[RMDB]
RNA sequence: GGGAACGACUCGAGUAGAGUCGAAAACAGCCUUAAAGUUCGCUUUAAGGCUGAAAAAAGCGUACUACAACCACGCUGCUACCCACCUCCCAAAUAGGAGAGGCAGACCCGUGCGUUGUAUCGCAAAAAGGUAUAUCUUCUUCGGAAGAUAUACCAAUCCUCAAUAAAGGUUCGCCUUUAUUGAGGAAAAAGAAACAACAACAACAAC
Reactivity to 2A3 in 0.01 (KOAc 150mM, MgCl2 10mM, bicine 150mM(pH8.5), 24C), signal-to-noise 3, nucleotides 027 to 156: c000a000g000c000c000u000u010a000a010a000g020u060u120c200g050c120u000u000u000a000a000g010g010c000u000g000a020a010a010a010a000a010g040c040g040u130a060c050u000a000c030a000a000c010c000a000c010g000c010u000g000c010u100a220c050c030c010a040c000c020u010c000c010c050a190a280a100u300a120g010g000a020g000a040g030g030c000a010g010a140c070c060c040g000u000g040c100g020u000u010g010u030a040u300c010g000c050a000a010a070a060a050g020g000u000a000u000a000u000c000u010u000c000u010u090c160g020g000a000a000g000a000u000a000u000a000c000c000a000a000
Reactivity to DMS in 0.01 (KOAc 150mM, MgCl2 10mM, bicine 150mM(pH8.5), 24C), signal-to-noise 2, nucleotides 027 to 156: c000a030g000c010c000u000u000a020a000a010g020u010u010c300g030c000u000u010u000a010a010g020g030c000u000g020a000a040a080a080a090a050g000c020g040u000a110c120u000a030c000a020a000c000c000a000c000g010c000u000g000c030u000a020c020c000c020a300c230c010u000c000c010c010a090a220a220u000a030g010g010a010g010a130g010g000c000a020g000a080c030c100c010g060u010g000c160g020u000u000g010u000a010u000c020g000c000a020a060a100a130a170g000g020u000a000u000a010u000c000u000u000c010u010u010c300g030g000a020a010g000a010u000a000u000a000c000c020a000a020